RNA sequence: GGGAACGACUCGAGUAGAGUCGAAAAGCCAGCAGCGGACGCCUGUACGCCACGCCGCUGCUGUCGGUCAGCGUUUCCGCCAUAUGGCCCCAGUAGUUGGCCUUCGGCGUGUCCGGACUGGUGACCAUACCCUCGGGCGAUUCGUCGCCCGAGGGUAAAAAGAAACAACAACAACAAC
Reactivity to 2A3 in 0.01 (KOAc 150mM, MgCl2 10mM, bicine 150mM(pH8.5), 24C), signal-to-noise 1, nucleotides 027 to 126: g020c000c000a040g000c000a000g070c000g000g080a020c030g120c030c000u080g040u110a040c080g040c060c030a130c050g010c010c000g030c000u010g000c000u000g000u030c120g000g000u020c060a050g010c000g020u000u210u000c090c040g030c020c020a110u140a020u200g010g000c000c000c010c000a000g100u010a000g000u040u300g010g000c080c000u010u190c050g000g020c000g020u010g000u000c000c000g040g080a300c000u000g040g000u060g010a090c000c040a040
Chemical mapping of a 177-nucleotide RNA with 2A3. The reactions ran in a buffer of 150 mM KOAc, 10 mM MgCl2 and 150 mM bicine (pH 8.5), at 24 C. For 2A3 the reverse transcriptase was SuperScript II with manganese.